[RMDB]
RNA sequence: GGGAACGACUCGAGUAGAGUCGAAAAGAAGCUUUUAGCGGGGUUAAGCCGGAACUGUGUAGGCCGGUGUAAAUCCAGGGACACCCAGUUCUCCGAGGUAACGGGGGCUAUGUGGUCAGCCAGCCUGAGACGCCACAAAGCAGUAGGGUUGGCAAAAGCAUGUUUUUAGGUUCGCCUAAAAACAUGCAAAAGAAACAACAACAACAAC
Reactivity to 2A3 in 0.01 (KOAc 150mM, MgCl2 10mM, bicine 150mM(pH8.5), 24C), signal-to-noise 1, nucleotides 027 to 156: g050a040a030g000c010u070u120u160u300a100g000c040g010g000g000g000u090u090a090a000g010c000c020g010g040a050a070c110u150g030u050g010u260a040g050g020c010c000g000g000u020g010u120a030a030a010u130c020c020a020g030g000g020a010c000a020c000c000c000a000g000u080u000c000u010c030c000g000a020g000g130u110a140a020c040g000g000g000g000g000c000u010a010u150g040u000g150g000u010c000a000g010c000c000a010g000c010c010u010g020a080g000a010c090g010c030c000a050c050a120a110a000g010c030a040g020u040a020g030g000g000u010u000g000g000c010a010a000a020a010